[RMDB]
RNA sequence: GGGAACGACUCGAGUAGAGUCGAAAAGGGCAGUGUGACAAGCGGCUGGGUGGUUAUUCCACACACACACACACACGCUCCUUUUUUUUGGACGUGUUUUGUGUGUGUAUGUGGCACUCGUCGCCUUUGUGGGAAAUCCGUGUGGCACUGUGUUUGACUCGAUAGUAGAGUUCGCUCUACUAUCGAGAAAAGAAACAACAACAACAAC
Reactivity to 2A3 in 0.01 (KOAc 150mM, MgCl2 10mM, bicine 150mM(pH8.5), 24C), signal-to-noise 5, nucleotides 027 to 156: g060g030g000c020a020g020u030g010u080g090a040c040a050a030g000c000g040g000c040u300g100g030g000u040g000g060u150u180a130u200u080c010c020a030c010a010c000a000c000a000c000a000c000a000c000a000c000a000c000g030c090u020c010c010u060u080u080u040u010u010u160u120g000g000a000c000g000u000g000u020u060u170u080g000u020g000u010g000u000g000u000a020u030g000u000g010g000c000a000c000u010c010g030u030c000g010c010c000u070u080u060g040u120g000g010g040a060a240a070u120c020c010g020u040g000u030g080g000c000a000c010u000g000u000g010u060u040u060g030a040